[RMDB]
The data come from the RNA Mapping Database (RMDB), library OK3TST. Chemical mapping of a 207-nucleotide RNA with 2A3 and DMS. Reactivities are given for positions 27 through 156. As a SHAPE reagent, 2A3 marks flexible, mostly unpaired nucleotides at the ribose 2'-OH. DMS (dimethyl sulfate) methylates the pairing face of unpaired adenines and cytosines.
RNA sequence: GGGAACGACUCGAGUAGAGUCGAAAAAAAGGGAAUGGCUUCGAUACCGUAAUUAUAGGCGAAUCCUAGAUCGAAUGACGCAAAGUGUGCUACGAUAAUAUCAUCGCCAAUAAAAUCAGACAAACCAUCCAUUGCGGUUGACUCAGCAACCCCAAACCCACUUGCAGAUAUUCGUAUCUGCAAGUGGAAAAGAAACAACAACAACAAC
Reactivity to 2A3 in 0.01 (KOAc 150mM, MgCl2 10mM, bicine 150mM(pH8.5), 24C), signal-to-noise 3, nucleotides 027 to 156: a000a000a000g020g010g020a090a140u140g120g010c010u050u060c040g010a020u050a060c000c000g000u010a030a040u070u130a070u130a160g010g000c010g000a010a010u060c020c050u090a040g010a100u010c030g010a110a110u110g060a130c050g040c100a120a160a200g110u140g040u080g080c000u040a010c040g000a010u020a120a080u090a080u170c080a020u020c000g000c020c000a010a020u110a060a080a010a010u140c050a010g110a130c060a040a120a000c050c030a040u060c060c000a030u020u030g000c020g000g000u060u080g020a030c010u000c030a010g000c000a050a080c030c010c000c000a020a000a120c020
Reactivity to DMS in 0.01 (KOAc 150mM, MgCl2 10mM, bicine 150mM(pH8.5), 24C), signal-to-noise 1, nucleotides 027 to 156: a070a020a110g000g000g090a140a140u010g010g020c010u000u000c080g010a230u010a020c010c010g000u000a020a140u060u010a120u000a130g000g030c040g020a140a150u030c060c060u000a070g000a080u000c090g040a210a170u000g020a060c020g040c020a040a110a240g070u000g030u000g050c070u060a060c000g010a030u010a060a070u000a110u000c060a060u020c030g020c010c020a150a070u000a010a080a030a140u010c040a090g040a150c090a020a180a070c060c000a110u000c150c020a190u000u000g040c020g060g010u000u000g000a300c150u000c170a000g000c010a030a090c000c010c000c040a040a110a240c190